[RMDB]
RNA sequence: GGGAACGACUCGAGUAGAGUCGAAAAGAUAUGGAACUCCGAAGAACACGAUUCCGAAGAACUCGGAAACGAGGGAGGAAAUGUGGGAGGAGUUCCUAAGUCAAACGAGUAUGUUCGCAUACUCGAACUUGUCUUGGAAGUUCGCUUCCAAGACAAGAAAAGAAACAACAACAACAAC
Reactivity to DMS in 0.01 (KOAc 150mM, MgCl2 10mM, bicine 150mM(pH8.5), 24C), signal-to-noise 2, nucleotides 027 to 126: g000a100u000a300u010g000g000a000a030c000u000c000c000g000a110a190g000a210a200c030a000c010g020a090u000u000c000c000g020a060a180g020a150a130c000u000c020g000g000a140a040a100c010g020a000g010g000g000a060g010g000a000a020a110u000g030u000g010g000g000a120g000g000a030g000u000u000c000c010u030a020a070g030u010c030a050a060a180c010g000a010g010u000a000u000g000u030u010c260g030c010a020u000a000c000u000c000g030a060a040
Reactivity to 2A3 in 0.01 (KOAc 150mM, MgCl2 10mM, bicine 150mM(pH8.5), 24C), signal-to-noise 1, nucleotides 027 to 126: g000a020u040a040u220g010g000a020a010c000u000c010c030g190a300a050g040a080a010c030a010c030g110a140u010u000c000c000g130a220a040g000a050a000c010u020c000g030g010a020a030a010c000g000a010g000g000g020a030g000g020a020a040a020u140g000u010g010g040g000a040g000g010a000g000u000u000c000c010u000a000a000g030u030c020a060a020a110c020g000a000g000u010a010u040g030u000u150c220g040c160a010u000a000c000u000c000g000a050a030
Structure probing data (DMS and 2A3) for a 177-nucleotide construct. Conditions: 150 mM KOAc, 10 mM MgCl2 and 150 mM bicine (pH 8.5), 24 C. The data come from the RNA Mapping Database (RMDB), library TTRDEL.